[RMDB]
RNA sequence: GGGAACGACUCGAGUAGAGUCGAAAAGAUAUGGACUGAGGGAGCUGUGGGAUCGGAAACGAUCCCUUAGCAUCGAUCUCACAUGUCCUAAGUCAAACAUGUUGUUAUGUUCGCAUAACAACAUGAACCCUUUUAUGUCCUUCGGGACAUAAAAGGGAAAAGAAACAACAACAACAAC
Reactivity to DMS in 0.01 (KOAc 150mM, MgCl2 10mM, bicine 150mM(pH8.5), 24C), signal-to-noise 2, nucleotides 027 to 126: g000a060u000a240u000g020g000a010c020u000g000a050g010g020g000a020g020c010u000g030u000g000g030g010a000u010c000g010g000a040a030a120c010g020a010u000c010c000c010u000u000a020g000c030a250u000c180g020a120u020c000u000c000a100c220a080u000g010u000c000c010u010a060a080g040u000c030a130a150a210c000a000u000g000u000u000g010u000u000a010u000g010u010u010c210g010c000a000u000a000a020c000a010a000c000a000u000g000a060a150
Reactivity to 2A3 in 0.01 (KOAc 150mM, MgCl2 10mM, bicine 150mM(pH8.5), 24C), signal-to-noise 1, nucleotides 027 to 126: g040a000u050a090u100g020g010a020c030u040g010a010g010g010g010a030g000c000u000g020u020g010g000g000a000u010c010g000g010a000a010a000c000g000a000u000c000c010c000u000u070a000g030c000a090u260c010g030a030u020c020u020c000a080c030a120u300g010u030c000c010u010a050a010g060u050c030a020a060a150c000a070u020g010u020u000g000u020u000a010u020g060u030u060c300g030c190a000u010a020a000c000a000a010c010a010u000g010a000a000
This 177-nucleotide RNA was probed chemically with DMS and 2A3. The reactions ran in a buffer of 150 mM KOAc, 10 mM MgCl2 and 150 mM bicine (pH 8.5), at 24 C. Source: RMDB library TTRDEL, as collected in RNAgym. 2A3 adducts were read by reverse transcription with SuperScript II with manganese. For DMS the reverse transcriptase was MarathonRT.